[RMDB]
RNA sequence: GGGAACGACUCGAGUAGAGUCGAAAAAGACUCCUAGACCACAGCAACCCAGCCACAAAAAUCUGUUACUGAAGCACCAGGGGUUUGGCCUAGGUCCUCCUGGUAGCCACACAGAAAGCCAAACAGGGUACUCCAUUACGUUCGCGUAAUGGAGUACAAAAGAAACAACAACAACAAC
Reactivity to DMS in 0.01 (KOAc 150mM, MgCl2 10mM, bicine 150mM(pH8.5), 24C), signal-to-noise 1, nucleotides 027 to 126: a130g000a180c050u000c010c000u000a060g010a080c060c020a050c100a100g020c030a040a010c020c050c010a090g060c020c060a070c090a040a070a060a100a110u000c010u000g000u000u000a190c070u000g030a120a170g040c010a000c000c010a020g000g010g010g000u010u020u000g000g010c000c010u000a080g000g000u000c040c010u000c000c000u000g030g010u000a060g050c030c040a070c150a040c040a030g000a070a050a110g010c060c080a030a030a050c150a080g010g030
Reactivity to 2A3 in 0.01 (KOAc 150mM, MgCl2 10mM, bicine 150mM(pH8.5), 24C), signal-to-noise 1, nucleotides 027 to 126: a000g000a040c070u010c090c000u000a080g070a030c000c020a060c060a070g000c010a000a080c000c000c040a010g090c100c020a080c020a020a170a040a010a050u000c060u010g020u070u080a100c020u090g070a090a000g000c000a000c000c010a000g000g020g020g000u050u150u260g080g010c020c000u030a060g030g250u000c010c010u030c000c010u000g000g020u040a050g020c020c030a010c010a000c010a040g050a110a020a020g000c030c070a030a050a090c040a050g090g100

Chemical mapping of a 177-nucleotide RNA with DMS and 2A3. Source: RMDB library OK2TST, as collected in RNAgym. Values cover nucleotides 27 to 126. The RNA was probed in 150 mM KOAc, 10 mM MgCl2 and 150 mM bicine (pH 8.5) at 24 C. The DMS profile rests on 894 reads.